[RMDB]
RNA sequence: GGGAACGACUCGAGUAGAGUCGAAAAGAUAUGGACCAUCCCUUCCGCAAGGUCGAGACCCGAAGAACGCUUUCGGAAACGAAAGCGGGAGGGUCUCGACCUUGACCCGGAACAUGGUCCUAAGUCACCUUCUAUCUAAGUUCGCUUAGAUAGAAGGAAAAGAAACAACAACAACAAC
Reactivity to DMS in 0.01 (KOAc 150mM, MgCl2 10mM, bicine 150mM(pH8.5), 24C), signal-to-noise 4, nucleotides 027 to 126: g010a050u000a300u010g010g000a020c010c000a010u010c030c140c070u000u000c000c000g040c010a020a010g010g010u000c010g000a020g010a030c010c000c010g020a130a160g010a170a210c010g020c010u000u020u000c010g000g000a140a090a180c010g010a010a000a000g000c000g000g010g010a060g020g020g010u000c010u000c000g000a000c000c000u000u000g000a060c280c300c070g010g010a020a010c140a010u000g000g000u000c000c000u000a000a060g000u000c050a280
Conditions: 150 mM KOAc, 10 mM MgCl2 and 150 mM bicine (pH 8.5), 24 C.
Structure probing data (DMS) for a 177-nucleotide construct.
For DMS, 5,456 sequencing reads were counted.
The data come from the RNA Mapping Database (RMDB), library TTRINS.